The record gives the reactivity of an RNA of 177 nucleotides to DMS and 2A3. It was measured as part of the RMDB library M2PK50. The DMS profile rests on 1,228 reads. Values cover nucleotides 27 to 126.
RNA sequence: GGGAACGACUCGAGUAGAGUCGAAAACCUCUUGGAUUCGUCCAAGAGGAUACGGGCUUUUGCGCCGGGCCCGGCCGGCCCGCCCGGAACGGGCAACCCAAACAUUUUGCCUAUUCGUAGGCAAAAAGGAGUUUAUUUGAUUCGUCAAAUAAACUCCAAAAGAAACAACAACAACAAC
Reactivity to DMS in 0.01 (KOAc 150mM, MgCl2 10mM, bicine 150mM(pH8.5), 24C), signal-to-noise 1, nucleotides 027 to 126: c010c000u000c000u010u000g000g010a050u010u000c130g020u000c000c000a030a000g000a000g000g000a020u000a010c020g010g000g020c010u000u010u020u010g000c040g030c020c010g000g000g030c010c020c000g020g010c040c010g000g020c050c130c170g020c190c030c030g000g010a050a080c020g020g000g000c010a090a030c000c000c010a090a110a100c160a130u000u000u000u000g010c000c000u000a020u000u030c200g000u000a010g000g000c000a000a000a010a030a090
Reactivity to 2A3 in 0.01 (KOAc 150mM, MgCl2 10mM, bicine 150mM(pH8.5), 24C), signal-to-noise 1, nucleotides 027 to 126: c020c000u040c010u020u000g000g020a010u050u010c160g030u030c040c000a000a010g010a010g000g000a000u020a040c020g000g040g000c030u110u190u300u170g070c180g070c010c040g000g050g000c000c020c100g000g030c000c000g000g000c040c060c050g010c010c000c000g010g030a120a050c010g000g010g010c000a020a030c000c000c000a060a080a040c030a030u000u040u010u060g000c000c000u020a040u030u090c160g100u050a020g000g000c000a000a000a000a000a010